[RMDB]
RNA sequence: GGGAACGACUCGAGUAGAGUCGAAAAGAAAGAAAGGGGCUGGCUUUAGCUCAGCGGUUACUUCGCGUGUCAUCAAACCACCUCUCUGGGUGGUUCGAGACCCGUGGGCGCUCUCCAUCUCUCUUAAAUCGUUUGGAAGAUUCGUCUUCCAAACGAUAAAAGAAACAACAACAACAAC
Reactivity to DMS in 0.01 (KOAc 150mM, MgCl2 10mM, bicine 150mM(pH8.5), 24C), signal-to-noise 2, nucleotides 027 to 126: g010a060a100a050g000a030a180a070g020g000g000g000c040u000g000g010c070u070u010u010a050g000c050u020c050a080g010c050g030g030u000u020a060c050u000u010c000g020c030g000u000g000u000c000a100u000c020a090a000a030c000c000a000c000c010u010c200u020c300u040g000g020g020u000g000g000u000u020c050g000a030g020a020c000c060c030g050u000g000g000g000c030g030c020u000c070u000c030c030a100u010c050u000c080u000c000u000u000a050a260
Reactivity to 2A3 in 0.01 (KOAc 150mM, MgCl2 10mM, bicine 150mM(pH8.5), 24C), signal-to-noise 4, nucleotides 027 to 126: g080a020a060a000g080a020a090a020g040g010g030g000c020u040g010g070c000u150u120u160a020g020c010u010c090a000g000c000g010g010u070u070a070c010u060u140c030g000c020g020u020g010u030c230a300u010c010a230a010a000c000c000a010c010c000u140c020u030c140u230g010g000g000u000g000g000u000u000c000g000a000g020a000c000c030c000g000u030g000g020g000c050g000c030u000c000u010c020c010a100u030c030u000c000u000c000u040u050a090a150